[RMDB]
RNA sequence: GGGAACGACUCGAGUAGAGUCGAAAAGGGGGCGUACUGGCUUCGACGUGGGUGCUGAAGCAUAAGGAGCAUACCGGGGCGGAUGAGGACCUCGUUAAAAACGUCCACUUUGUAAUUGGCAACGAUUACGCACUUGCAGCUUAAUUAAGCAGCACGAGCAUUUGAAUCAGUUCGCUGAUUCAAAUGCAAAAGAAACAACAACAACAAC
Reactivity to 2A3 in 0.01 (KOAc 150mM, MgCl2 10mM, bicine 150mM(pH8.5), 24C), signal-to-noise 1, nucleotides 027 to 156: g020g000g050g000g000c010g010u040a030c030u030g080g000c040u020u040c020g080a100c060g050u120g000g030g060u040g020c060u060g050a110a000g040c010a000u000a050a040g030g000a040g050c060a040u090a070c040c040g010g040g000g000c020g040g010a050u050g050a080g000g090a010c000c000u020c000g000u000u060a050a020a020a000a050c000g000u000c020c010a020c010u140u120u130g020u020a070a040u010u020g060g000c030a060a000c000g020a010u010u010a010c030g010c020a060c050u040u030g000c040a030g010c020u070u020a070a040u130u130a280a000g000c010a000g010c000a030c010g050a060
The record gives the reactivity of an RNA of 207 nucleotides to 2A3.
Reactivities are given for positions 27 through 156.
Source: RMDB library RSTRND, as collected in RNAgym.
For 2A3 the reverse transcriptase was SuperScript II with manganese.
For 2A3, 691 sequencing reads were counted.
Conditions: 150 mM KOAc, 10 mM MgCl2 and 150 mM bicine (pH 8.5), 24 C.